[RMDB]
RNA sequence: GGGAACGACUCGAGUAGAGUCGAAAAAAUAGAUAAAUAUUACGGCGAACGGACGACAUUAAAUUAUUGCUCGUUAUAUAACAUACCAACAGCGGUUGUUAAAUUUUUUAAUGUAUUUGGGCCAAGACAAAGUUAUUCACUUCGGUGAAUAACUUUGAAAAGAAACAACAACAACAAC
Reactivity to 2A3 in 0.01 (KOAc 150mM, MgCl2 10mM, bicine 150mM(pH8.5), 24C), signal-to-noise 3, nucleotides 027 to 126: a000a000u250a070g100a030u240a100a180a040u210a170u220u150a070c020g030g010c010g030a090a040c040g040g070a030c030g000a000c020a000u010u060a040a010a000u130u060a060u040u110g050c050u050c100g080u130u030a100u070a010u040a200a000c040a010u110a060c010c090a090a080c130a200g130c070g090g000u060u060g030u030u090a000a030a070u010u020u010u010u030u030a000a040u040g040u040a080u030u040u060g060g020g000c040c020a000a000g000a010
Reactivity to DMS in 0.01 (KOAc 150mM, MgCl2 10mM, bicine 150mM(pH8.5), 24C), signal-to-noise 2, nucleotides 027 to 126: a050a070u030a060g010a210u060a080a080a050u040a100u020u010a110c050g010g010c030g000a080a090c110g000g010a020c120g000a050c020a000u010u010a000a020a010u010u010a000u020u010g010c090u010c070g000u010u000a060u070a140u010a090a030c070a150u030a030c020c030a060a120c140a070g000c140g010g040u000u000g030u000u040a070a010a010u000u000u000u000u000u000a020a050u000g000u010a070u010u000u010g000g000g010c080c010a060a050g000a230
Overview
Chemical mapping of a 177-nucleotide RNA with 2A3 and DMS. Conditions: 150 mM KOAc, 10 mM MgCl2 and 150 mM bicine (pH 8.5), 24 C. The 2A3 profile rests on 960 reads.